[RMDB]
RNA sequence: GGGAACGACUCGAGUAGAGUCGAAAACGUCACCAGCAAGAUGGGUGCAAAAACACCAAUCUGUGCAUAGGUCGGUAACACACCAAUUAAGGUGGUACAGAUCCCCAUCAUGGUGAUGGUAAUAAAAGUCCAUUUAGGAUUUCGAUCCUAAAUGGACAAAAGAAACAACAACAACAAC
Reactivity to DMS in 0.01 (KOAc 150mM, MgCl2 10mM, bicine 150mM(pH8.5), 24C), signal-to-noise 4, nucleotides 027 to 126: c010g040u000c000a010c000c010a080g000c060a150a030g000a020u000g010g000g030u000g020c090a040a080a080a170a180c060a030c010c010a040a030u000c010u000g020u020g020c030a160u000a100g010g030u000c010g000g020u010a030a070c080a150c010a020c010c030a100a120u010u000a110a070g010g010u000g000g010u000a030c040a040g000a040u000c040c030c030c010a060u010c160a230u000g000g030u000g000a010u000g030g010u000a060a070u000a070a050a090a110
Reactivity to 2A3 in 0.01 (KOAc 150mM, MgCl2 10mM, bicine 150mM(pH8.5), 24C), signal-to-noise 5, nucleotides 027 to 126: c000g000u000c010a000c000c000a020g040c080a090a010g010a000u010g020g030g000u070g030c060a040a030a030a050a060c030a010c030c000a030a050u010c030u050g160u100g030c030a060u100a130g040g000u020c060g000g050u090a170a010c170a000c000a000c140c020a020a020u280u120a180a120g040g010u030g020g000u020a010c000a010g020a030u010c010c000c020c010a040u090c010a020u040g010g000u000g010a010u010g010g030u060a080a070u070a060a110a020a000